[RMDB]
RNA sequence: GGGAACGACUCGAGUAGAGUCGAAAAACGGAACGACUUCGGUCGUUCCGUAAAAACCGUAGGCGAGAUGACAUGGGAGAAUGUUCGAAAGAGUAAUUCGACGAUCAUGUCCGCUCUCGCCUAAACGGAAAAAGGAAUCAUGUUCGCAUGAUUCCAACUAGAGACUAACCUUCGGGUUAGUCUCUAGAAAAGAAACAACAACAACAAC
Reactivity to DMS in 0.01 (KOAc 150mM, MgCl2 10mM, bicine 150mM(pH8.5), 24C), signal-to-noise 1, nucleotides 027 to 156: a020c040g010g000a010a020c020g030a020c000u000u030c300g050g050u010c020g040u000u000c000c000g000u000a000a030a050a040a030c020c000g000u000a040g020g000c010g000a000g030a040u020g000a060c020a020u000g000g000g030a170g010a170a060u000g020u000u000c020g060a090a070a220g020a140g020u000a050a190u000u000c000g000a100c060g000a100u000c010a000u000g000u020c020c020g010c170u000c000u000c010g000c050c010u010a000a020a070c030g000g000a000a020a070a230a100g010g010a010a020u010c000a020u000g010u000u000c300g040c030a060u000g010a030u000u010c000c000a000a030
Reactivity to 2A3 in 0.01 (KOAc 150mM, MgCl2 10mM, bicine 150mM(pH8.5), 24C), signal-to-noise 1, nucleotides 027 to 156: a010c000g010g000a000a000c010g000a010c020u050u090c100g010g030u000c000g000u000u000c000c000g020u000a000a000a000a000a010c000c000g000u000a000g000g000c000g000a000g000a010u150g000a020c000a000u010g020g010g040a060g010a050a040u050g050u070u050c040g030a060a040a050g190a030g140u140a140a250u000u010c020g050a090c000g010a200u010c000a000u010g000u000c000c000g000c000u000c000u000c000g070c000c000u000a010a010a010c000g010g090a000a000a040a080a060g000g000a000a000u000c000a000u000g040u080u180c280g010c090a000u000g000a000u040u050c000c000a000a000